[RMDB]
RNA sequence: GGGAACGACUCGAGUAGAGUCGAAAAUUACUAGUCUGUGAUGAAUUGCUUUGACUUCUGACACCUGGUAUGAAAACUGCACGUGCAGUCUGAUUAUUUAGCAAGACUGAGGCUUAAAAUAAAUCAAUCCCUCUAACUAUUUCGAUAGUUAGAGGGAAAAAGAAACAACAACAACAAC
Reactivity to 2A3 in 0.01 (KOAc 150mM, MgCl2 10mM, bicine 150mM(pH8.5), 24C), signal-to-noise 2, nucleotides 027 to 126: u090u020a050c030u020a040g050u040c060u090g130u050g080a080u060g010a060a120u060u050g030c040u150u070u070g040a110c000u020u020c030u100g040a020c010a030c030c030u030g000g030u030a070u090g030a090a000a030a100c030u040g000c030a090c120g210u180g000c000a000g000u000c020u040g020a040u030u060a120u080u160u080a040g020c000a030a020g010a030c000u060g020a010g030g050c000u040u020a090a040a050a050u160a070a040a010u050c020a030a070
Reactivity to DMS in 0.01 (KOAc 150mM, MgCl2 10mM, bicine 150mM(pH8.5), 24C), signal-to-noise 4, nucleotides 027 to 126: u000u000a080c050u000a080g020u000c030u010g020u000g010a120u010g000a080a070u010u000g020c060u000u000u010g010a090c060u000u000c030u010g010a100c090a060c060c030u000g010g000u010a020u000g000a070a070a100a080c060u010g000c030a100c210g020u010g000c010a010g010u000c050u000g010a080u000u000a070u010u000u000a040g030c070a050a040g010a050c070u000g000a090g010g000c050u000u010a040a020a050a070u010a030a040a060u010c090a080a160